[RMDB]
RNA sequence: GGGAACGACUCGAGUAGAGUCGAAAAGUUCUGAUAAGUAAGCACUCGUUGGAGCAGUGUUACUGCAUUAUUGUCUAGCCGAUUAUUGACUGUCAGGACAUGAGGUGAGGAUGAAUCACAGGCUAGGGUAGGAAGUCUCUUUCGAGAGACUUCCUACAAAAGAAACAACAACAACAAC
Reactivity to DMS in 0.01 (KOAc 150mM, MgCl2 10mM, bicine 150mM(pH8.5), 24C), signal-to-noise 2, nucleotides 027 to 126: g010u000u000c020u000g000a020u010a080a060g010u000a050a100g020c050a070c040u000c070g010u000u020g000g010a130g030c130a030g000u000g010u010u000a010c060u000g000c090a080u000u000a040u000u000g030u000c010u000a030g010c000c020g010a070u000u020a060u000u000g000a100c090u000g000u000c020a010g000g000a020c040a100u020g010a070g030g020u000g000a050g020g000a140u020g020a180a090u000c050a040c060a120g040g000c010u000a020g000g010
Reactivity to 2A3 in 0.01 (KOAc 150mM, MgCl2 10mM, bicine 150mM(pH8.5), 24C), signal-to-noise 1, nucleotides 027 to 126: g010u000u040c010u010g020a040u000a120a000g020u040a090a010g020c010a010c000u040c020g100u120u220g160g050a110g050c120a000g030u020g040u110u060a040c010u020g030c020a060u110u140a070u140u190g070u030c010u010a010g070c000c010g040a020u030u000a010u080u180g060a060c000u030g000u040c010a020g000g060a020c030a060u050g070a040g000g030u060g020a010g050g010a130u220g070a070a090u030c000a020c060a000g010g000c000u030a030g020g000
The record gives the reactivity of an RNA of 177 nucleotides to DMS and 2A3. For 2A3, 822 sequencing reads were counted. DMS adducts were read by reverse transcription with MarathonRT. The DMS profile rests on 1,819 reads. The RNA was probed in 150 mM KOAc, 10 mM MgCl2 and 150 mM bicine (pH 8.5) at 24 C.